[RMDB]
RNA sequence: GGGAACGACUCGAGUAGAGUCGAAAAUUGAUGCCAUCACCCAGAUGUUCUAUAAACUUGGUAUCCUCGUCCGAUUUCAUAUCCUUUGCCAACCAAUACAUAUAGCUAAACUCAGGCAUAUGUUCCACACAUCCUGAACAAUGAAAUUCUCCAGAAGCCUGAGUACCAGGUUCGCCUGGUACUCAGGAAAAGAAACAACAACAACAAC
Reactivity to 2A3 in 0.01 (KOAc 150mM, MgCl2 10mM, bicine 150mM(pH8.5), 24C), signal-to-noise 1, nucleotides 027 to 156: u100u070g000a010u100g110c000c110a070u060c010a020c000c000c000a080g040a100u070g040u070u110c120u170a060u080a170a260a160c140u070u070g000g000u020a020u100c000c000u000c040g190u000c000c060g000a100u050u140u000c020a010u080a170u170c000c030u060u000u140g020c020c020a040a000c020c000a270a000u070a040c110a050u100a040u020a130g040c010u040a100a100a000c050u070c190a010g000g050c000a020u020a000u010g020u040u100c020c000a050c010a000c000a070u170c020c000u020g050a190a000c000a050a000u040g040a140a010a000u090u030c040u000c020c010a080g070a190a080g120